[RMDB]
RNA sequence: GGGAACGACUCGAGUAGAGUCGAAAACGUAAAGCACAAUGAAUGCUGGAUGGGAUUCGCAGAGACAAAGCCAGCAGUUUGGUAGGGGAAUGCAUAAUAAGUCUUGCAAAUCUUGAGGUGGAAAAUCUCGUUAAGUACGGAUAUAUGUCACCGAGGAAAUUACCGCACUAUUCGUAGUGCGGUAAUUAAAAGAAACAACAACAACAAC
Reactivity to 2A3 in 0.01 (KOAc 150mM, MgCl2 10mM, bicine 150mM(pH8.5), 24C), signal-to-noise 5, nucleotides 027 to 156: c060g030u090a070a040a010g060c020a030c020a090a170u140g050a090a050u070g030c020u010g030g030a090u060g040g010g040a060u040u070c050g010c060a020g020a010g010a110c060a040a060a010g040c030c010a000g000c010a020g000u020u080u060g040g000u040a040g010g000g010g030a040a060u070g010c020a010u040a130a040u100a190a020g030u010c010u040u040g010c040a050a030a040u010c010u040u110g020a030g010g010u020g030g030a030a060a020a040u060c220u050c100g040u050u090a140a030g040u040a050c010g000g010a010u000a000u000a000u090g120u060c010a000c010c020g000a030g010g060a020
Reactivity to DMS in 0.01 (KOAc 150mM, MgCl2 10mM, bicine 150mM(pH8.5), 24C), signal-to-noise 3, nucleotides 027 to 156: c080g020u000a020a040a090g020c020a070c030a100a150u000g020a060a130u010g030c010u010g000g020a160u010g020g010g020a140u000u000c040g000c060a080g020a110g020a090c050a070a110a170g020c040c020a050g020c020a070g020u000u000u000g020g040u000a040g000g000g000g020a070a110u000g000c050a110u000a070a110u010a070a130g010u000c020u000u010g000c040a070a090a100u000c020u000u000g010a100g030g000u010g000g010a040a070a070a100u000c000u000c030g020u000u000a050a140g050u010a070c050g000g000a050u000a100u000a110u000g000u010c020a030c020c000g010a170g020g020a050